[RMDB]
RNA sequence: GGGAACGACUCGAGUAGAGUCGAAAAUAAGUCUAGUUCGCUAGACUUACUAUCGGGAAAACAGCCUCCCGGCUGGAUCAGGCGGAUUCCGUCCAAGCGCUGCAACACACGUAUUCGUACGUGUGAAACUUCACAUAUCUUUCGAGAUAUGUGAAGUAAAAGAAACAACAACAACAAC
Reactivity to DMS in 0.01 (KOAc 150mM, MgCl2 10mM, bicine 150mM(pH8.5), 24C), signal-to-noise 9, nucleotides 027 to 126: u000a000a010g010u000c000u000a000g010u000u010c220g020c000u000a000g000a010c000u000u000a010c090u000a100u010c080g010g000g000a030a050a110a190c040a030g000c010c010u000c020c030c030g010g010c060u010g010g000a050u010c060a150g020g010c170g010g010a100u000u000c020c020g000u000c030c070a100a040g010c100g010c010u000g010c150a090a240c000a010c000a000c000g010u000a020u000u010c180g010u000a000c000g020u000g010u000g000a020a070
Reactivity to 2A3 in 0.01 (KOAc 150mM, MgCl2 10mM, bicine 150mM(pH8.5), 24C), signal-to-noise 9, nucleotides 027 to 126: u070a000a010g000u000c000u000a010g010u030u050c160g020c100u000a000g000a010c000u010u000a020c010u040a040u190c040g010g000g020a020a090a030a070c010a010g000c010c000u000c010c010c000g030g010c040u060g020g010a040u050c030a070g270g060c090g160g020a100u140u030c020c010g010u000c010c030a030a010g050c060g000c130u040g040c030a150a060c000a010c000a000c000g000u010a020u040u080c190g040u050a010c000g000u000g000u000g010a020a000
Structure probing data (DMS and 2A3) for a 177-nucleotide construct.
Reactivities are given for positions 27 through 126.
2A3 adducts were read by reverse transcription with SuperScript II with manganese.
It was measured as part of the RMDB library M2PK50.